[RMDB]
Chemical mapping of a 207-nucleotide RNA with DMS and 2A3. It was measured as part of the RMDB library OK3TST. DMS adducts were read by reverse transcription with MarathonRT. Reactivities are rounded to 0.1 and cut off at 0 and 3.
RNA sequence: GGGAACGACUCGAGUAGAGUCGAAAAGUGACUUUUACAUUUUAUUGUUUUGUGCAAUUGCACCUUUUUGUCUGCAUGAAUCUCAAGAUUGUAAGUGGCGCAUUCCUAUUGUCCGCUUGAGGGGAGCAAAGCAGUAUGUCAAGAGAAUUCCAGUCCACCCAUUAUACCGUUUCGACGGUAUAAUGGGAAAAGAAACAACAACAACAAC
Reactivity to DMS in 0.01 (KOAc 150mM, MgCl2 10mM, bicine 150mM(pH8.5), 24C), signal-to-noise 1, nucleotides 027 to 156: g020u000g010a120c030u000u010u000u000a100c020a020u010u000u020u000a020u040u000g040u000u010u000u000g030u000g020c070a060a110u000u020g000c030a060c050c050u010u000u000u010u010g040u000c070u000g000c040a060u020g020a040a150u010c030u030c060a040a100g030a080u000u000g020u020a040a080g040u000g030g010c000g000c100a210u000u010c050c020u000a150u000u000g020u000c050c030g010c060u010u010g000a080g040g040g010g040a240g040c020a050a040a090g020c050a040g000u010a040u010g020u000c070a030a120g010a240g010a150a070u000u000c040c010a160g030u020c040c030a200
Reactivity to 2A3 in 0.01 (KOAc 150mM, MgCl2 10mM, bicine 150mM(pH8.5), 24C), signal-to-noise 4, nucleotides 027 to 156: g030u030g050a110c030u050u090u030u080a040c040a080u150u130u110u160a110u030u110g040u010u030u030u040g030u020g020c060a160a190u120u070g020c020a070c010c050u080u190u070u180u300g060u060c040u000g010c000a020u040g020a100a060u040c010u000c050a030a050g010a130u130u170g060u190a070a050g030u040g070g040c040g000c080a080u130u150c010c000u100a070u020u160g050u030c010c010g010c030u020u030g020a060g030g020g010g030a050g030c000a030a030a030g000c010a000g010u040a020u070g040u050c070a060a010g000a020g030a090a050u030u040c050c010a000g030u010c020c030a050